Overview: The record gives the reactivity of an RNA of 207 nucleotides to 2A3 and DMS. It was measured as part of the RMDB library RNAMAK. As a SHAPE reagent, 2A3 marks flexible, mostly unpaired nucleotides at the ribose 2'-OH. The reactions ran in a buffer of 150 mM KOAc, 10 mM MgCl2 and 150 mM bicine (pH 8.5), at 24 C.
RNA sequence: GGGAACGACUCGAGUAGAGUCGAAAAGCAGCCAUUCGUGGCUGCAAAAGCGUACUACAGAAAUCUGCUCGAGGAUCUAUAGACCCAAGCAUCCCAAAUAGGAUGCUUGCUAUAGGGAGAGCUUUCUGUAUCGCAAAGUCAGCUCUUCGGAGCUGACGCAUGUACUUGACUUCGGUCAAGUACAUGCAAAAGAAACAACAACAACAAC
Reactivity to 2A3 in 0.01 (KOAc 150mM, MgCl2 10mM, bicine 150mM(pH8.5), 24C), signal-to-noise 3, nucleotides 027 to 156: g000c010a000g000c000c000a040u080u090c250g160u090g000g000c000u010g000c020a030a030a010a010g000c010g040u080a080c060u000a000c020a000g020a020a040a040u160c200u230g010c010u020c000g050a230g050g000a010u000c000u000a000u000a020g060a080c030c080c070a000a000g000c000a000u010c000c030c020a190a300a090u240a120g000g000a000u000g000c000u000u000g010c000u000a000u000a000g010g000g000a010g000a000g000c000u000u010u000c000u000g000u000a020u260c000g000c020a010a010a000g010u000c000a010g000c000u010c000u040u260c300g100g000a000g000c010u000g000a000c000
Reactivity to DMS in 0.01 (KOAc 150mM, MgCl2 10mM, bicine 150mM(pH8.5), 24C), signal-to-noise 1, nucleotides 027 to 156: g020c000a010g010c000c010a060u000u020c240g040u000g040g080c000u020g010c000a000a050a030a120g020c010g040u000a080c070u000a080c000a050g000a030a030a040u000c100u010g010c000u000c000g020a090g000g000a060u000c010u000a030u000a020g000a220c150c260c070a010a020g010c010a010u000c000c000c010a040a200a210u010a070g000g000a010u010g000c000u000u000g010c010u000a000u000a020g010g010g000a080g000a020g020c000u000u000u000c000u000g000u000a030u000c070g000c000a080a100a120g000u000c000a010g000c000u000c010u000u020c300g030g000a040g000c000u000g000a010c000
Reactivities are given for positions 27 through 156.